Chemical mapping of a 207-nucleotide RNA with 2A3 and DMS. The 2A3 profile rests on 1,418 reads. Values cover nucleotides 27 to 156.
RNA sequence: GGGAACGACUCGAGUAGAGUCGAAAAAUAGAAGAAACGUCAUGGAGCAAAUGGCACAUUAGGGAUCAACUCAGACAAGACUGAUCUAUCACUUAUCAAAUGCACCAACAGUUAAAAGAACCCAAAUGUAUGUAUUCAAUAGGAACUCAUUCCUGAAGAUAAUGGUCCUAUUCGUAGGACCAUUAUCAAAAGAAACAACAACAACAAC
Reactivity to 2A3 in 0.01 (KOAc 150mM, MgCl2 10mM, bicine 150mM(pH8.5), 24C), signal-to-noise 3, nucleotides 027 to 156: a010u070a030g050a090a010g050a060a100a010c060g010u030c080a090u100g010g000a050g000c020a040a040a040u020g030g000c030a010c030a130u110u170a090g030g000g000a010u020c050a020a060c020u020c080a020g060a190c060a150a030g030a100c020u020g020a020u010c010u050a070u130c050a040c090u080u070a030u100c040a050a050a020u060g000c000a010c020c010a020a040c020a010g010u060u080a040a170a090a040g040a030a060c000c000c000a000a060a010u070g010u010a100u030g000u010a290u020u110c030a050a060u040a190g010g030a040a020c040u050c210a220u110u040c000c010u020g010a100a020
Reactivity to DMS in 0.01 (KOAc 150mM, MgCl2 10mM, bicine 150mM(pH8.5), 24C), signal-to-noise 2, nucleotides 027 to 156: a160u010a120g000a130a080g030a040a080a120c080g000u000c030a170u000g010g030a060g040c050a060a080a150u000g020g070c060a110c060a000u010u000a120g020g000g030a120u000c030a020a060c050u000c030a100g030a170c090a090a160g050a100c070u000g010a060u000c070u010a100u000c060a080c080u000u000a080u000c050a020a080a050u000g020c000a030c040c030a050a060c050a110g010u000u000a030a050a050a120g000a100a120c040c000c040a030a110a060u000g010u000a020u000g030u000a020u000u000c040a070a060u000a090g020g010a040a080c080u010c110a100u010u000c000c000u040g000a140a190